[RMDB]
RNA sequence: GGGAACGACUCGAGUAGAGUCGAAAAUUGCCGACCGUGCCACUGUUGCCAAUAUGGCUCCAGAAUACGGUGCUACCAUGGGGUUCUUCCCCGUUGACGGACAGACCCUGAAGUAUCUGAGAACCACAACACCUAAGGUGUUCGCACCUUAGGUGUUAAAAGAAACAACAACAACAAC
Reactivity to DMS in 0.01 (KOAc 150mM, MgCl2 10mM, bicine 150mM(pH8.5), 24C), signal-to-noise 5, nucleotides 027 to 126: u010u000g010c030c070g000a070c020c020g010u010g010c170c140a160c020u010g010u000u000g010c020c010a160a160u000a110u010g020g000c010u000c050c010a020g010a130a120u010a020c010g000g020u000g010c100u010a080c040c050a120u000g010g000g010g000u000u000c110u000u000c030c010c020c070g010u010u010g000a160c150g010g000a060c170a050g000a060c020c010c010u000g000a120a100g000u000a040u010c050u000g010a140g000a080a140c090c080a090c210
Reactivity to 2A3 in 0.01 (KOAc 150mM, MgCl2 10mM, bicine 150mM(pH8.5), 24C), signal-to-noise 2, nucleotides 027 to 126: u020u090g100c010c000g010a020c010c020g020u020g070c030c030a120c050u030g030u010u010g030c020c000a130a090u170a130u300g010g000c000u000c000c010a010g050a020a060u160a090c010g000g000u010g010c000u040a040c000c030a080u090g000g020g000g060u060u090c050u100u070c030c020c000c000g030u040u070g040a050c060g000g020a030c010a030g030a010c020c000c000u040g010a080a010g000u050a040u080c100u050g040a030g020a180a030c040c010a050c030
Record summary
An RNA of 177 nucleotides, treated with DMS and 2A3 and read out base by base. The RNA was probed in 150 mM KOAc, 10 mM MgCl2 and 150 mM bicine (pH 8.5) at 24 C. Values cover nucleotides 27 to 126. For DMS, 4,422 sequencing reads were counted. It was measured as part of the RMDB library OK2TST. DMS adducts were read by reverse transcription with MarathonRT. Reactivities are rounded to 0.1 and cut off at 0 and 3.